[RMDB]
RNA sequence: GGGAACGACUCGAGUAGAGUCGAAAAAGUAUGUGAGGCAGGGCAGGACCUGCAAGGGCCGCUAACACCCCUCAGCCCCUCAGCAGGUUGGCCGUGGUGGCCUGGGUCCGGGCUGCGUGUGCCACGGGCACCUACUUGUGGAAUUGGGGGUUGGGGAAUGAGUAUAUUAGUUCGCUAAUAUACUCAUAAAAGAAACAACAACAACAAC
Reactivity to 2A3 in 0.01 (KOAc 150mM, MgCl2 10mM, bicine 150mM(pH8.5), 24C), signal-to-noise 3, nucleotides 027 to 156: a000g180u140a100u150g110u050g050a060g020g070c040a010g020g000g030c060a050g080g060a190c000c000u020g010c020a010a020g030g000g000c020c020g010c080u110a220a040c050a160c150c050c010c000u020c010a000g010c000c000c020c010u110c030a010g060c000a000g000g040u020u010g030g000c000c000g000u000g000g030u020g000g000c000c010u010g000g000g030u010c020c020g010g000g000c050u060g050c090g110u180g080u130g000c000c000a000c000g010g000g000c050a180c030c000u000a000c000u000u010g000u030g020g080a210a240u210u190g010g010g000g000g000u000u000g000g010g000g000a000
Reactivity to DMS in 0.01 (KOAc 150mM, MgCl2 10mM, bicine 150mM(pH8.5), 24C), signal-to-noise 1, nucleotides 027 to 156: a110g000u000a040u010g010u000g010a040g000g020c020a060g000g020g000c060a160g030g000a220c010c000u000g000c040a100a050g000g000g010c020c020g000c040u010a050a060c070a060c030c020c000c040u000c020a030g010c010c000c010c000u000c120a080g000c020a080g010g000u000u000g020g000c010c000g050u000g010g030u000g000g030c020c000u010g010g010g010u000c010c040g000g010g040c030u010g050c160g020u030g040u000g060c020c010a040c010g010g000g000c030a090c050c000u000a020c020u010u010g050u020g020g000a090a230u000u000g000g010g000g030g020u000u000g000g020g030g000a050
The record gives the reactivity of an RNA of 207 nucleotides to 2A3 and DMS. It was measured as part of the RMDB library OK3TST. For DMS, 4,278 sequencing reads were counted. High DMS reactivity at an A or C suggests that its Watson-Crick edge is free. The RNA was probed in 150 mM KOAc, 10 mM MgCl2 and 150 mM bicine (pH 8.5) at 24 C.